[RMDB]
RNA sequence: GGGAACGACUCGAGUAGAGUCGAAAAACGAUCCAUGUCUAGACUUCGACCCAGAAAACUGCACACUUACUUUUGCACCCGACACAAGCCGUCUCUGUGGAGUUCUUAUUAAGUGCGGAUGGGACUGCAGGUCCGUUGAAAUUACACAUAAUAAUAAUAGGUAGAAGUGAUUCGUCACUUCUACCUAAAAAGAAACAACAACAACAAC
Reactivity to 2A3 in 0.01 (KOAc 150mM, MgCl2 10mM, bicine 150mM(pH8.5), 24C), signal-to-noise 1, nucleotides 027 to 156: a000c030g020a020u000c000c000a010u050g030u020c040u070a040g000a130c000u050u000c090g010a020c000c000c000a020g050a000a220a000a000c020u020g040c010a030c010a000c030u090u030a040c000u050u020u110u040g020c000a010c010c070c030g080a050c010a000c010a170a000g060c060c020g010u020c030u020c000u030g060u080g070g010a050g010u090u000c050u050u120a110u120u200a090a020g010u010g060c010g010g040a020u020g060g000g000a030c010u080g000c020a020g000g030u030c020c030g000u000u020g000a000a000a050u060u120a010c000a000c010a010u180a080a030u160a170a010u000a150a000
Reactivity to DMS in 0.01 (KOAc 150mM, MgCl2 10mM, bicine 150mM(pH8.5), 24C), signal-to-noise 1, nucleotides 027 to 156: a070c070g020a070u000c030c020a060u010g000u000c050u000a080g000a050c040u010u000c060g010a160c030c040c030a180g000a130a080a090a090c040u010g000c040a030c090a080c070u010u000a020c060u000u000u000u000g000c100a050c020c000c000g000a120c030a070c030a050a100g000c040c040g020u000c050u000c020u020g030u010g010g000a030g030u010u010c030u000u010a070u020u000a020a120g030u000g040c040g000g030a120u000g000g000g040a050c030u000g010c070a080g000g000u010c000c030g040u020u000g000a060a020a160u010u010a060c050a040c050a050u010a100a080u020a060a040u000a060a260